[RMDB]
RNA sequence: GGGAACGACUCGAGUAGAGUCGAAAAACUGCUAGUAUCUACGGAUACUAGCAGAAAGAAGCCGGGUUCUACCCGGCACGCAACAACGGAAGACAGAAAACUGACGCGCUGUACGCAGCGCGUCAGACACCCUUGAACAAUUCGUUGUUCAAGGGUGAAAAGAAACAACAACAACAAC
Reactivity to 2A3 in 0.01 (KOAc 150mM, MgCl2 10mM, bicine 150mM(pH8.5), 24C), signal-to-noise 1, nucleotides 027 to 126: a000c010u000g000c020u000a010g010u000a000u000c000u020a020c270g060g000a000u000a000c010u010a000g000c000a010g000a010a010a000g030a060a010g000c000c000g030g030g060u080u160c040u130a230c010c000c000g000g160c000a000c010g030c010a000a200c050a060a070c090g100g050a070a020g020a070c140a080g130a060a000a040a100c030u010g000a000c000g030c000g000c030u000g010u090a080c240g020c110a000g000c020g110c050g000u000c000a010g000a010